This 207-nucleotide RNA was probed chemically with DMS and 2A3. 2A3 adducts were read by reverse transcription with SuperScript II with manganese. The data come from the RNA Mapping Database (RMDB), library OK3TST.

RNA sequence: GGGAACGACUCGAGUAGAGUCGAAAAGGGGUCUCCAGUCAGGAAUGCUUAGGUGAGGGGUUUCUAUACCCUGACCAGACACACAUCAUAAUCUUGCAGAGCACAGUGACCCUUGGCUGAAAGAGAGAACGUGGACUUGCCUGUGGCAGAGCAGAAACAUAAUUGAUCAAUUCGUUGAUCAAUUAUGAAAAGAAACAACAACAACAAC
Reactivity to DMS in 0.01 (KOAc 150mM, MgCl2 10mM, bicine 150mM(pH8.5), 24C), signal-to-noise 4, nucleotides 027 to 156: g010g010g040g020u000c010u000c050c020a120g020u000c050a090g000g030a100a080u000g010c020u010u000a120g050g030u010g020a170g030g020g040g020u000u000u000c120u010a170u000a070c020c000c000u010g010a040c010c010a090g000a070c060a070c060a070c060a120u010c060a120u000a060a100u000c040u000u000g020c040a090g010a100g020c040a070c050a060g010u010g000a090c030c020c020u000u000g010g000c040u000g020a040a060a080g000a090g010a120g000a070a100c070g020u010g000g010a070c060u010u000g010c030c020u010g000u000g000g040c020a070g000a100g020c030a060g010a150a100a200
Reactivity to 2A3 in 0.01 (KOAc 150mM, MgCl2 10mM, bicine 150mM(pH8.5), 24C), signal-to-noise 6, nucleotides 027 to 156: g000g010g010g010u020c020u000c030c010a030g050u060c030a010g030g070a130a060u080g020c060u110u150a060g010g030u060g060a100g020g010g000g020u020u090u060c100u080a160u120a060c010c010c000u010g020a000c000c020a020g080a030c050a000c010a000c000a110u100c020a040u100a180a070u090c050u080u090g000c040a020g010a020g090c040a010c020a090g020u050g060a060c010c000c000u010u040g020g000c010u010g030a040a110a020g050a010g010a000g010a040a030c070g020u050g010g020a040c030u020u040g020c010c030u080g000u060g020g020c030a010g000a020g050c010a010g070a030a060a000